[RMDB]
An RNA of 207 nucleotides, treated with DMS and 2A3 and read out base by base. The DMS profile rests on 1,684 reads. The 2A3 profile rests on 536 reads. 2A3 adducts were read by reverse transcription with SuperScript II with manganese.
RNA sequence: GGGAACGACUCGAGUAGAGUCGAAAAGAAGCCGAAACAAGAACUCCCAGUGGCAGGAAAGAUCAAUAACCUGGAUUCUUGAGAGAGGUAAAAUGAGGAUAGAAAAAGUAUCAUGAGACUCGGCAAUUCAAAGGUCCUUGCGACAUUAGGAUAGUUCAUAGACAGCUAUUUUCGAAUAGCUGUCUAUAAAAGAAACAACAACAACAAC
Reactivity to DMS in 0.01 (KOAc 150mM, MgCl2 10mM, bicine 150mM(pH8.5), 24C), signal-to-noise 1, nucleotides 027 to 156: g020a100a120g070c050c000g030a040a090a110c070a060a090g010a070a070c070u000c020c040c010a110g050u000g010g040c010a050g020g000a050a090a190g000a090u000c050a050a070u000a110a080c100c040u010g000g020a100u000u000c050u000u010g000a110g040a110g030a070g020g000u010a070a020a110a070u000g000a090g020g010a130u000a070g000a070a050a070a090a100g000u000a040u000c020a060u000g020a210g020a050c020u000c060g000g000c060a030a120u000u000c050a030a020a070g000g000u000c020c020u000u010g020c020g020a110c040a060u010u010a060g070g000a050u000a060g020u000u010c040
Reactivity to 2A3 in 0.01 (KOAc 150mM, MgCl2 10mM, bicine 150mM(pH8.5), 24C), signal-to-noise 1, nucleotides 027 to 156: g030a040a010g110c030c000g070a030a030a070c090a070a010g070a040a000c000u090c020c020c000a000g070u030g040g020c020a010g040g070a130a090a110g040a090u120c050a080a110u090a110a100c060c000u000g000g070a090u060u010c030u060u070g000a080g000a000g000a010g050g010u140a060a040a000a080u120g010a010g070g010a020u120a180g130a110a140a060a060a030g100u100a020u100c050a010u130g030a010g000a070c010u010c000g020g010c000a020a060u180u030c080a140a070a000g040g040u010c000c020u050u070g030c000g040a070c050a100u150u060a040g090g000a030u020a160g000u020u040c030

The RNA was probed in 150 mM KOAc, 10 mM MgCl2 and 150 mM bicine (pH 8.5) at 24 C. For DMS the reverse transcriptase was MarathonRT.